About this RNA
Structure probing data (2A3) for a 207-nucleotide construct. The data come from the RNA Mapping Database (RMDB), library RNAMAK.

RNA sequence: GGGAACGACUCGAGUAGAGUCGAAAAAUGACGCGUUCGCGCGUCAUAAAAAGGGGUCGGAAUGCGUUGAUCUAUGAACUACUUCUGAAGCCUCCACGGAAGCAUAGGGAGCGAAUUCCGACGGAGGCACCCAAAAAUAUCCACUUCGGUGGAUAAAACGUGUCGGCCAAUUCGUUGGCCGACACGUAAAAGAAACAACAACAACAAC
Reactivity to 2A3 in 0.01 (KOAc 150mM, MgCl2 10mM, bicine 150mM(pH8.5), 24C), signal-to-noise 2, nucleotides 027 to 156: a010u000g000a000c010g010c000g010u020u090c220g020c000g020c000g110u020c000a000u020a000a040a010a000a010g060g000g010g000u000c000g000g000a010a010u050g080c030g050u020u120g060a070u060c000u020a030u020g050a100a110c080u150a070c010u230u000c000u010g010a080a010g010c010c000u000c000c000a010c000g000g010a000a000g040c040a010u010a000g020g000g050a130g070c010g010a040a030u010u000c000c000g000a000c020g000g000a000g000g000c000a020c020c000c000a050a070a030a000a020u080a000u000c000c010a010c030u060u040c260g090g010u000g000g030a010u020a000a050a000
Overview
The reactions ran in a buffer of 150 mM KOAc, 10 mM MgCl2 and 150 mM bicine (pH 8.5), at 24 C.